[RMDB]
RNA sequence: GGGAACGACUCGAGUAGAGUCGAAAAGCAAACGACUCUAACUACUCUCUAGCAGCUUAGGCUAGCUAGCCAUCAACCACACGUUUCGCACGUGGACAGUGGAUUCUGAUGGUCAUAUUACAGUGUGCUAGCGAGGGAACUCCGUCCGGGGGUGAACGUUAGGAUAUGAGUUCGCUCAUAUCCUAACAAAAGAAACAACAACAACAAC
Reactivity to DMS in 0.01 (KOAc 150mM, MgCl2 10mM, bicine 150mM(pH8.5), 24C), signal-to-noise 2, nucleotides 027 to 156: g020c170a120a160a260c010g010a010c010u030c010u000a050a110c040u000a030c020u000c030u000c020u000a030g010c000a140g000c030u000u000a060g060g020c010u010a040g020c060u000a160g000c010c000a030u000c010a030a300c000c010a040c010a010c020g030u000u000u000c130g010c110a040c070g010u000g010g000a040c070a110g010u000g020g000a130u010u000c130u010g000a040u000g010g000u000c020a080u000a080u000u000a110c120a080g000u000g020u000g020c020u000a030g010c040g010a070g000g010g000a180a070c070u000c020c020g030u000c060c040g020g000g020g010g010u000g020a040a070c130
Reactivity to 2A3 in 0.01 (KOAc 150mM, MgCl2 10mM, bicine 150mM(pH8.5), 24C), signal-to-noise 7, nucleotides 027 to 156: g090c080a160a100a040c020g000a010c000u000c000u050a110a090c030u140a080c000u010c010u000c000u030a000g000c020a010g010c010u130u110a080g050g070c040u030a040g020c030u030a010g000c010c000a010u020c000a020a170c010c000a020c010a010c060g020u030u100u130c180g040c060a060c060g060u120g030g060a030c040a060g040u040g020g040a090u180u040c050u100g010a010u010g000g010u040c020a030u070a060u150u160a070c060a040g050u070g020u040g210c000u000a000g000c010g010a020g010g020g010a030a030c010u020c040c010g040u030c010c020g010g000g000g000g010u050g040a050a020c050
Source: RMDB library RSTRND, as collected in RNAgym. An RNA of 207 nucleotides, treated with DMS and 2A3 and read out base by base. The reactions ran in a buffer of 150 mM KOAc, 10 mM MgCl2 and 150 mM bicine (pH 8.5), at 24 C.